[RMDB]
RNA sequence: GGGAACGACUCGAGUAGAGUCGAAAAAAAAAGAUAUGGACGUGAACUACGAUGAACGCAGGCGUUGAAAGCUCAUCGGAAACGAUGAGCUGGAGCCUGUUAGUAAUCGCACGUCCUAAGUCAAAAAGAUGUUAGAGAUGUUCGCAUCUCUAACAUCAAAAGAAACAACAACAACAAC
Reactivity to 2A3 in 0.01 (KOAc 150mM, MgCl2 10mM, bicine 150mM(pH8.5), 24C), signal-to-noise 1, nucleotides 027 to 126: a020a020a000a000a000g070a070u120a040u100g000g000a000c000g010u010g040a120a080c110u210a050c300g020a000u020g000a010a000c000g020c030a020g030g000c030g260u300u070g000a000a000a000g010c010u020c000a000u000c010g000g000a020a070a000c000g000a000u010g000a000g030c000u000g000g000a000g010c010c000u000g000u010u000a000g000u000a010a010u000c000g000c010a000c000g000u050c000c010u000a010a010g000u030c040a000a070a000a150a020
Reactivity to DMS in 0.01 (KOAc 150mM, MgCl2 10mM, bicine 150mM(pH8.5), 24C), signal-to-noise 2, nucleotides 027 to 126: a020a070a020a140a040g010a020u000a260u000g000g000a030c010g020u000g000a080a050c200u020a300c040g010a030u000g020a230a160c210g000c000a000g000g010c000g000u000u010g000a180a090a060g000c000u010c000a020u000c000g000g010a040a050a040c010g000a000u000g000a000g000c000u000g000g000a100g020c000c000u000g000u000u010a030g000u000a050a010u000c000g010c000a000c000g000u000c000c000u000a000a080g000u020c020a020a080a100a090a150